[RMDB]
This 207-nucleotide RNA was probed chemically with 2A3. It was measured as part of the RMDB library OK3TST.
RNA sequence: GGGAACGACUCGAGUAGAGUCGAAAAAAGAGAUUCAAUGAUUCUAUCUGCUUCUGUGUCAUUUACAUGAGAUGAUGGAUAGUGUUUCAUAUGUUGAGUUCUAACUACCUUUCUAAGUAUCUGCAAAUCUUUUAUAGCAACCUUAGUGAAGAUACUCGGCCUGCUAUUAUUUCGAUAAUAGCAGGCCAAAAGAAACAACAACAACAAC
Reactivity to 2A3 in 0.01 (KOAc 150mM, MgCl2 10mM, bicine 150mM(pH8.5), 24C), signal-to-noise 2, nucleotides 027 to 156: a020a000g180a010g000a030u190u090c070a040a020u080g010a000u010u000c010u010a000u030c000u010g040c000u050u000c000u020g030u010g050u070c040a200u050u130u300a030c030a030u160g210a130g000a000u040g040a070u020g000g000a000u000a000g010u010g050u040u090u070c010a000u060a080u100g010u020u010g020a040g040u010u010c010u020a040a160c010u030a030c060c010u010u070u080c010u000a020a000g000u030a100u130c050u020g030c010a040a070a120u160c080u050u140u130u070a200u120a120g020c000a010a000c020c000u020u000a020g020u040g120a010a050g020a050u070a100c060u010c070